[RMDB]
RNA sequence: GGGAACGACUCGAGUAGAGUCGAAAAGCUCGGUGACACCGCGUCUGCCUGGGUCCGAAAGAUUUCUUGUCGCAAAUCUACAAGACAUUGGUUAACGUGUGGGCCGCUUGAGCGGCCGCUCGGCGGGUCAUCCUAUGCGCUUCGGUGCGUGGGAUGAAAAAGAAACAACAACAACAAC
Reactivity to 2A3 in 0.01 (KOAc 150mM, MgCl2 10mM, bicine 150mM(pH8.5), 24C), signal-to-noise 9, nucleotides 027 to 126: g020c010u000c010g040g040u050g030a030c010a020c050c010g010c010g030u010c050u050g020c000c000u040g040g010g030u000c010c010g040a070a050a000g020a010u010u030u020c030u050u130g120u090c060g020c100a020a030a060u030c010u030a030c030a060a020g010a010c010a030u020u070g030g010u060u100a060a010c010g010u020g010u090g040g050g000c000c000g010c010u140u230g050a030g020c000g000g000c010c000g000c010u010c010g050g000c010g010g000g010
Reactivity to DMS in 0.01 (KOAc 150mM, MgCl2 10mM, bicine 150mM(pH8.5), 24C), signal-to-noise 9, nucleotides 027 to 126: g010c010u010c030g010g010u020g000a100c110a100c040c030g000c030g010u020c060u010g010c010c010u000g020g000g010u000c010c020g000a110a130a060g000a030u000u000u000c040u020u010g010u010c180g000c170a030a030a040u010c020u010a050c170a140a080g000a020c040a080u010u010g010g010u010u010a090a160c030g010u000g020u010g020g010g010c010c000g000c010u010u040g010a090g010c010g000g010c050c050g000c010u010c030g010g000c020g000g000g000
Chemical mapping of a 177-nucleotide RNA with 2A3 and DMS. The 2A3 profile rests on 33,678 reads. Source: RMDB library OK1LIB, as collected in RNAgym. For 2A3 the reverse transcriptase was SuperScript II with manganese. The reactions ran in a buffer of 150 mM KOAc, 10 mM MgCl2 and 150 mM bicine (pH 8.5), at 24 C.